[RMDB]
RNA sequence: GGGAACGACUCGAGUAGAGUCGAAAAGGUGACCUUGAUCAAGUGGCUUAACUUCUCCAAAGCCCAGUUCCCUGUUUGCAAAAUAGGGUUAACACUACCUACCUUGGAGGAUUGAUUGAUCUGGGAUCAAAUGAGGUCAAAGAUGACAAGCCUCGGACCGUAUAAUAGGGUUCGCCCUAUUAUACGGAAAAGAAACAACAACAACAAC
Reactivity to 2A3 in 0.01 (KOAc 150mM, MgCl2 10mM, bicine 150mM(pH8.5), 24C), signal-to-noise 6, nucleotides 027 to 156: g060g010u060g050a060c010c010u030u050g000a040u050c040a040a050g050u050g220g010c010u100u120a070a070c010u110u030c000u010c000c010a030a050a060g020c020c000c030a020g010u040u070c000c000c000u010g020u020u050u140g200c100a090a090a020a050u010a030g020g020g000u050u150a060a020c040a030c060u080a070c010c020u040a060c010c000u030u030g030g000a010g020g010a040u040u120g060a050u020u020g010a000u030c040u050g000g010g020a040u060c030a000a060a120u140g010a020g010g020u060c050a120a080a010g130a090u200g010a030c050a100a020g020c010c010u010c010g010g030a020
Reactivity to DMS in 0.01 (KOAc 150mM, MgCl2 10mM, bicine 150mM(pH8.5), 24C), signal-to-noise 3, nucleotides 027 to 156: g000g020u000g010a090c010c010u000u010g060a050u000c030a050a050g020u000g050g020c160u010u000a050a070c100u000u010c010u000c010c010a020a060a060g000c010c190c050a120g020u000u000c020c010c000u000g020u000u000u040g030c240a120a080a050a060u000a030g020g000g020u000u000a040a060c010a160c150u010a070c020c010u000a050c030c000u010u000g000g000a050g030g000a050u000u000g000a150u010u000g000a040u000c010u000g000g020g020a140u010c030a040a070a080u000g000a050g020g010u000c040a050a060a120g000a140u020g010a090c050a060a140g010c000c000u010c020g000g000a190

This 207-nucleotide RNA was probed chemically with 2A3 and DMS. The DMS profile rests on 6,876 reads. The data come from the RNA Mapping Database (RMDB), library OK3TST.